This 177-nucleotide RNA was probed chemically with 2A3 and DMS. The RNA was probed in 150 mM KOAc, 10 mM MgCl2 and 150 mM bicine (pH 8.5) at 24 C. Values cover nucleotides 27 to 126. DMS adducts were read by reverse transcription with MarathonRT. 2A3 adducts were read by reverse transcription with SuperScript II with manganese.
RNA sequence: GGGAACGACUCGAGUAGAGUCGAAAAAUCUAUUUACGUAACAUCUCUUUAGGGUACGUGAAUAACCCUACUGGUAAUGGCUAUAAUGAAAUAUUUAUAGGUAUAGGGCUUAGUGCAUAUGCCACCACGCAUAUCAUGAGUUCGCUCAUGAUAUGCGAAAAGAAACAACAACAACAAC
Reactivity to 2A3 in 0.01 (KOAc 150mM, MgCl2 10mM, bicine 150mM(pH8.5), 24C), signal-to-noise 1, nucleotides 027 to 126: a000u000c000u020a050u010u030u000a000c000g000u000a060a090c000a300u040c060u020c000u190u100u230a060g050g000g020u040a010c000g000u020g000a020a000u000a000a000c010c010c000u000a030c050u100g050g020u040a050a090u070g060g000c000u010a000u020a070a020u010g020a020a050a000u060a060u110u090u000a050u010a020g010g010u090a070u070a110g040g060g070c020u090u060a050g070u100g210c060a060u050a030u150g020c000c010a020c000c040a020
Reactivity to DMS in 0.01 (KOAc 150mM, MgCl2 10mM, bicine 150mM(pH8.5), 24C), signal-to-noise 1, nucleotides 027 to 126: a030u010c230u010a020u000u000u000a050c020g000u000a040a070c060a150u010c060u000c190u000u000u030a070g010g000g010u000a000c000g020u020g000a010a020u000a030a050c020c000c000u010a120c180u000g000g000u000a090a080u050g010g010c010u000a030u020a030a020u000g000a100a110a260u000a100u000u000u000a050u000a040g000g000u000a040u010a080g020g000g020c040u000u000a030g030u020g000c120a120u000a050u000g020c010c050a070c110c020a100